[RMDB]
RNA sequence: GGGAACGACUCGAGUAGAGUCGAAAAGAUAUGGAGGCAGCUUUUGACGCUGGAGAUUCGGAAACGAAUCUUUUAGCGAUAAGCUGCUCCUAAGUCAAACCUAGUGCCAGUUCGCUGGCACUAGGAACUAGAGUAUGAUCUUCGGAUCAUACUCUAGAAAAGAAACAACAACAACAAC
Reactivity to 2A3 in 0.01 (KOAc 150mM, MgCl2 10mM, bicine 150mM(pH8.5), 24C), signal-to-noise 4, nucleotides 027 to 126: g020a020u080a050u150g000g020a040g210g250c010a000g020c020u060u120u220u240g260a160c130g000c010u000g020g010a010g000a000u000u010c010g020g020a000a070a040c010g000a010a000u010c000u000u020u040u200a010g000c010g020a010u000a020a000g010c000u000g000c000u000c000c000u010a090a020g020u020c050a140a030a080c000c000u000a000g000u000g000c000c000a010g010u090u120c220g180c170u010g000g020c000a000c000u000a000g000g010a010a000
Reactivity to DMS in 0.01 (KOAc 150mM, MgCl2 10mM, bicine 150mM(pH8.5), 24C), signal-to-noise 3, nucleotides 027 to 126: g020a040u000a270u000g000g010a040g030g020c000a000g010c000u000u000u000u000g030a180c070g020c000u010g010g000a010g000a020u000u000c010g010g000a080a080a180c010g000a000a000u000c000u000u000u000u010a000g020c000g040a150u010a030a010g000c000u000g000c000u000c000c000u000a030a190g000u000c020a110a140a250c010c000u010a010g020u000g000c000c000a000g000u010u010c280g010c000u010g000g000c000a010c000u000a000g010g000a010a060